[RMDB]
RNA sequence: GGGAACGACUCGAGUAGAGUCGAAAAGCCUGUUCACAGCCGGUUUCCGGGCCCGUCAUCCGGGUGGGUUGCGAGAGGCGGCAUGCAAAUGCCGUCCCAGAUGAAUGGCUGCCACGUUCCGGGUCAACUUGUGAUAUAUGUUCGCAUAUAUCACAAGAAAAGAAACAACAACAACAAC
Reactivity to 2A3 in 0.01 (KOAc 150mM, MgCl2 10mM, bicine 150mM(pH8.5), 24C), signal-to-noise 1, nucleotides 027 to 126: g030c000c020u050g080u110u080c080a050c020a070g090c040c010g050g010u010u120u040c020c000g010g020g000c000c010c020g070u050c010a070u010c020c010g000g000g030u050g040g050g020u080u110g050c060g040a150g010a030g070g020c000g000g000c010a010u040g000c020a100a090a050u010g000c000c000g020u020c000c020c010a070g030a100u110g060a070a070u080g030g010c030u030g040c020c010a070c020g020u060u000c010c000g040g020g000u060c040a040a040
Reactivity to DMS in 0.01 (KOAc 150mM, MgCl2 10mM, bicine 150mM(pH8.5), 24C), signal-to-noise 5, nucleotides 027 to 126: g020c020c000u010g020u000u010c040a100c050a130g030c040c030g010g020u010u000u010c070c020g020g000g020c030c040c060g000u010c140a090u010c140c030g000g000g020u000g000g010g010u000u010g010c060g000a110g010a080g000g010c010g010g000c000a010u000g000c260a080a160a020u000g010c000c010g010u000c000c010c010a090g010a120u010g000a070a070u010g010g010c030u000g000c030c020a090c040g010u000u000c020c020g010g010g010u000c100a090a160

Chemical mapping of a 177-nucleotide RNA with 2A3 and DMS. 2A3 adducts were read by reverse transcription with SuperScript II with manganese. Conditions: 150 mM KOAc, 10 mM MgCl2 and 150 mM bicine (pH 8.5), 24 C. Source: RMDB library RFMREP, as collected in RNAgym.